Chemical mapping of a 177-nucleotide RNA with DMS. Conditions: 150 mM KOAc, 10 mM MgCl2 and 150 mM bicine (pH 8.5), 24 C. Values are in units of 0.01, from 0 to 300, in steps of 10. For DMS the reverse transcriptase was MarathonRT.
RNA sequence: GGGAACGACUCGAGUAGAGUCGAAAAGAUAUGGAUCUAGAGAAGCGAUAAGGAGGUAUCGGAAACGAUACUCUCCUUUUGACGCUUCGAUUGGAUCCUAAGUCAAACACACUGUUCGCAGUGUGAAGAGAACAUUGGGGUUCGCCCCAAUGUUCUCAAAAGAAACAACAACAACAAC
Reactivity to DMS in 0.01 (KOAc 150mM, MgCl2 10mM, bicine 150mM(pH8.5), 24C), signal-to-noise 2, nucleotides 027 to 126: g000a030u000a300u010g020g020a000u000c000u000a040g010a300g010a010a010g040c000g010a140u000a000a010g040g000a020g000g000u000a000u000c030g020g000a080a110a100c000g000a010u000a000c020u010c000u020c000c000u020u000u010u000g020a180c150g020c000u000u000c000g000a270u030u000g010g000a020u000c010c000u010a040a160g000u000c040a090a150a250c000a040c000a000c000u000g000u000u020c300g040c010a010g050u000g000u000g010a140a120